[RMDB]
RNA sequence: GGGAACGACUCGAGUAGAGUCGAAAAAUUACCGGCGGCGCAGGUGGAGCUGCGAUCCCUCCGCCCAUCGCGUGCUCUCUCGGUGGCCCAGACGCUGCAAACGGACAGGCGGGCCACCUGCAACGAAAGUUCUCUCUAAUUUCGAUUAGAGAGAACUAAAAGAAACAACAACAACAAC
Reactivity to 2A3 in 0.01 (KOAc 150mM, MgCl2 10mM, bicine 150mM(pH8.5), 24C), signal-to-noise 4, nucleotides 027 to 126: a010u120u080a100c020c000g020g000c020g010g030c020g000c020a020g020g010u060g030g050a060g020c040u050g020c060g040a060u070c040c010c000u030c010c010g020c010c010c010a090u080c030g020c030g030u050g020c000u010c010u010c010u020c100g000g020u000g000g000c010c010c000a070g020a070c130g030c140u020g010c040a130a210a160c070g050g070a070c020a010g020g030c000g000g000g010c010c000a000c000c000u000g010c010a050a030c030g070a130a090
Reactivity to DMS in 0.01 (KOAc 150mM, MgCl2 10mM, bicine 150mM(pH8.5), 24C), signal-to-noise 6, nucleotides 027 to 126: a090u010u010a110c060c030g010g010c070g010g010c090g010c200a070g000g010u010g000g000a090g010c040u000g010c040g010a060u000c050c060c010u000c020c040g020c030c030c090a070u000c060g010c030g010u000g000c030u010c060u000c070u000c110g000g010u000g010g010c010c000c010a120g020a100c050g010c010u000g000c050a060a080a130c280g000g000a180c040a040g000g000c040g010g000g010c000c000a010c000c000u000g010c070a080a070c080g000a060a090
Chemical mapping of a 177-nucleotide RNA with 2A3 and DMS. DMS adducts were read by reverse transcription with MarathonRT. Conditions: 150 mM KOAc, 10 mM MgCl2 and 150 mM bicine (pH 8.5), 24 C. For DMS, 7,098 sequencing reads were counted.